This 177-nucleotide RNA was probed chemically with 2A3 and DMS. The DMS profile rests on 1,535 reads. It was measured as part of the RMDB library M2PK50. The RNA was probed in 150 mM KOAc, 10 mM MgCl2 and 150 mM bicine (pH 8.5) at 24 C. Values cover nucleotides 27 to 126.

RNA sequence: GGGAACGACUCGAGUAGAGUCGAAAACCAAGGUAGUUCGCUACCUUGGAAAGUAAGCUCGAGCGAAGGGAAGGGAAAGGACGCUCGAGCAACCCACCCAAAAAAGAGCAUGCUUCGGCAUGCUCAAGAGACUAUAUGACUUCGGUCAUAUAGUCUCAAAAGAAACAACAACAACAAC
Reactivity to 2A3 in 0.01 (KOAc 150mM, MgCl2 10mM, bicine 150mM(pH8.5), 24C), signal-to-noise 4, nucleotides 027 to 126: c000c000a000a010g000g000u010a000g000u040u050c200g020c100u000a000c000c010u000u000g000g020a030a010a000g060u060a090a030g000c000u000c000g000a000g010c040g030a120a110g100g040g100a080a120g100g010g050a150a220a080g070g030a020c020g000c000u000c010g010a000g000c000a010a000c010c010c000a030c000c030c000a050a150a030a010a030a030g010a000g010c000a000u000g000c000u030u030c110g040g000c000a000u000g000c000u020c000a000a000
Reactivity to DMS in 0.01 (KOAc 150mM, MgCl2 10mM, bicine 150mM(pH8.5), 24C), signal-to-noise 2, nucleotides 027 to 126: c000c000a030a020g000g030u000a000g000u000u010c270g060c010u010a000c000c000u050u010g040g000a020a040a160g030u000a090a110g000c000u000c000g000a040g000c020g010a140a150g000g010g010a090a080g010g000g000a080a090a050g000g000a220c020g010c000u010c000g010a010g000c000a040a000c080c030c050a150c080c030c030a000a010a050a100a090a080g000a020g040c000a010u000g010c000u000u010c190g030g000c000a000u000g000c000u000c000a000a030